[RMDB]
RNA sequence: GGGAACGACUCGAGUAGAGUCGAAAAUCUAUCACCAGCCCAUGUUUACGACACGAAUGGGCUGUUGCAAAUUACGUAUAGCUCUUGGAACAUCGUGUCGAAACGUUCCCAAGCUAUACGCCACAAAACUUUUGUCUUAUUUCGAUAAGACAAAAGUAAAAGAAACAACAACAACAAC
Reactivity to 2A3 in 0.01 (KOAc 150mM, MgCl2 10mM, bicine 150mM(pH8.5), 24C), signal-to-noise 8, nucleotides 027 to 126: u010c010u010a120u090c010a000c050c000a000g010c000c000c010a010u040g110u090u180u110a110c080g030a020c020a000c080g110a070a010u000g000g000g000c010u000g000u000u010g000c020a020a050a160u240u120a070c020g000u000a000u000a000g000c010u040c050u130u150g040g020a020a020c010a060u080c030g030u020g080u130c040g030a090a090a010c060g010u000u010c010c040c010a000a000g000c000u000a000u010a010c000g000c000c010a100c030a010a130a060
Reactivity to DMS in 0.01 (KOAc 150mM, MgCl2 10mM, bicine 150mM(pH8.5), 24C), signal-to-noise 8, nucleotides 027 to 126: u000c060u000a150u010c030a050c060c010a000g000c000c000c000a030u000g020u000u010u000a130c080g000a040c030a020c040g010a130a030u010g000g000g010c000u000g000u000u000g010c250a070a090a080u010u010a120c030g000u000a010u000a010g000c000u000c150u000u010g020g000a040a040c070a080u000c040g020u000g000u010c040g010a070a080a120c150g010u000u000c010c010c170a090a040g010c010u000a000u000a010c010g010c100c140a060c190a060a040a080
The record gives the reactivity of an RNA of 177 nucleotides to 2A3 and DMS.
For DMS the reverse transcriptase was MarathonRT.
The data come from the RNA Mapping Database (RMDB), library M2PK90.
Reactivities are given for positions 27 through 126.